The record gives the reactivity of an RNA of 177 nucleotides to 2A3 and DMS. The 2A3 profile rests on 16,071 reads. The data come from the RNA Mapping Database (RMDB), library M2PK50. Conditions: 150 mM KOAc, 10 mM MgCl2 and 150 mM bicine (pH 8.5), 24 C.

[RMDB]
RNA sequence: GGGAACGACUCGAGUAGAGUCGAAAACGAUAGCUGUUCGCAGCUAUCGAAAGGACUAGCCGUCAGGGUUAAGGCCAUACGGACAGCCGGGUCCAAUGCCGAAAAGAGGGUUGUUCGCAACCCUCAAGUAUUGUCAUAUCUUCGGAUAUGACAAUACAAAAGAAACAACAACAACAAC
Reactivity to 2A3 in 0.01 (KOAc 150mM, MgCl2 10mM, bicine 150mM(pH8.5), 24C), signal-to-noise 6, nucleotides 027 to 126: c000g000a010u000a000g010c000u010g050u080u060c260g000c140a000g000c010u000a000u010c000g010a020a010a000g020g000a020c010u020a020g020c000c010g060u120c100a060g080g010g020u070u090a110a120g130g020c000c000a060u080a120c050g060g020a010c020a030g040c030c010g100g010g000u000c010c010a010a030u110g050c020c010g070a080a070a030a040g000a000g000g010g000u000u000g010u040u070c170g010c060a000a010c000c000c000u000c000a000a000
Reactivity to DMS in 0.01 (KOAc 150mM, MgCl2 10mM, bicine 150mM(pH8.5), 24C), signal-to-noise 6, nucleotides 027 to 126: c020g010a010u000a000g010c000u000g010u000u020c240g030c010a010g010c000u000a000u010c000g000a030a080a130g000g010a040c020u000a180g010c010c020g010u010c150a120g010g010g010u000u000a090a120g020g020c010c040a070u010a300c100g000g010a040c040a100g010c010c020g000g020g000u000c010c010a100a080u010g000c020c010g010a160a030a090a100g000a020g000g000g010u000u000g000u000u000c190g010c030a020a010c000c000c000u000c000a000a040